[RMDB]
RNA sequence: GGGAACGACUCGAGUAGAGUCGAAAAUGAAGCGCUUCUAUCGUUGCUUGCCGGAUGCGCGCUUGCACAAUCUGUACGGUCCGACGGAAGCGGCGGUGGACGUGACGGCGUGGGCGUGCGAUGCGGACUAAAUGAUGCCGUUCGCGGCAUCAUUUAGAAAAGAAACAACAACAACAAC
Reactivity to 2A3 in 0.01 (KOAc 150mM, MgCl2 10mM, bicine 150mM(pH8.5), 24C), signal-to-noise 2, nucleotides 027 to 126: u130g030a050a020g030c000g010c050u070u030c030u060a060u060c010g040u030u120g030c020u050u070g160c000c000g000g070a070u070g140c020g040c000g020c040u020u190g000c020a010c040a090a180u150c020u050g050u080a030c040g040g000u030c010c010g010a030c010g010g070a100a020g030c020g060g000c000g000g040u050g010g020a020c020g060u100g030a040c010g000g050c030g000u040g040g000g030c020g020u050g030c020g040a040u080g000c020g010g060a020
Reactivity to DMS in 0.01 (KOAc 150mM, MgCl2 10mM, bicine 150mM(pH8.5), 24C), signal-to-noise 2, nucleotides 027 to 126: u010g000a170a120g030c030g010c060u000u010c020u000a040u000c050g010u000u000g000c020u000u000g020c010c000g020g000a050u000g020c070g020c060g000c070u000u000g020c100a060c170a060a080u020c100u000g000u010a060c060g000g000u000c060c010g010a080c040g020g010a070a040g000c020g010g030c000g010g030u010g000g000a040c100g000u010g000a130c070g000g010c040g000u000g010g000g000c030g000u000g000c050g000a070u000g020c030g020g010a170